[RMDB]
RNA sequence: GGGAACGACUCGAGUAGAGUCGAAAACAGUAUGCCCAUCAUUAAAAGCAAAAUUUGUUUGUUCAAAAAAUAGGGACGCAAAUCGAUGGGCGCGCUGCCAAAGACAGGGUUGUCUAUAUCAAAGCCGUACAAUUGGCUGUCUUCGUCGUAGUCGGAACGCAGUACAAUAAUUCGUUAUUGUACUGCGAAAAGAAACAACAACAACAAC
Reactivity to DMS in 0.01 (KOAc 150mM, MgCl2 10mM, bicine 150mM(pH8.5), 24C), signal-to-noise 1, nucleotides 027 to 156: c020a030g030u000a010u000g010c030c000c000a040u000c030a250u000u040a060a070a180a260g010c140a070a120a050a070u010u010u010g010u000u000u010g030u020u000c000a020a050a070a170a170a290u000a120g020g020g000a030c040g000c000a030a040a050u000c000g000a070u000g010g000g030c000g000c040g020c020u000g020c040c030a130a050a130g000a040c030a030g000g000g030u000u000g010u010c050u000a150u000a110u000c040a030a050a080g030c010c060g050u000a060c010a110a150u000u000g000g020c000u000g000u000c040u010u010c020g030u010c040g000u010a140g020u000c010g000g000a150a300
Reactivity to 2A3 in 0.01 (KOAc 150mM, MgCl2 10mM, bicine 150mM(pH8.5), 24C), signal-to-noise 3, nucleotides 027 to 156: c010a020g020u050a020u140g020c030c040c000a010u000c020a010u030u300a080a190a100a060g090c070a050a120a080a070u060u030u000g040u080u120u150g010u010u030c050a150a040a100a050a050a110u200a130g110g010g010a000c000g010c020a000a040a000u050c030g010a000u010g000g000g000c000g000c020g000c020u020g020c020c030a080a070a010g020a000c010a070g000g010g040u050u040g030u050c070u080a120u010a030u150c100a090a050a010g090c060c050g110u170a060c030a090a100u070u050g120g000c000u000g040u030c000u040u050c020g110u000c010g040u040a030g070u070c040g020g010a040a050
The data come from the RNA Mapping Database (RMDB), library OK3TST. Structure probing data (DMS and 2A3) for a 207-nucleotide construct. The 2A3 profile rests on 1,175 reads. Reactivities are rounded to 0.1 and cut off at 0 and 3.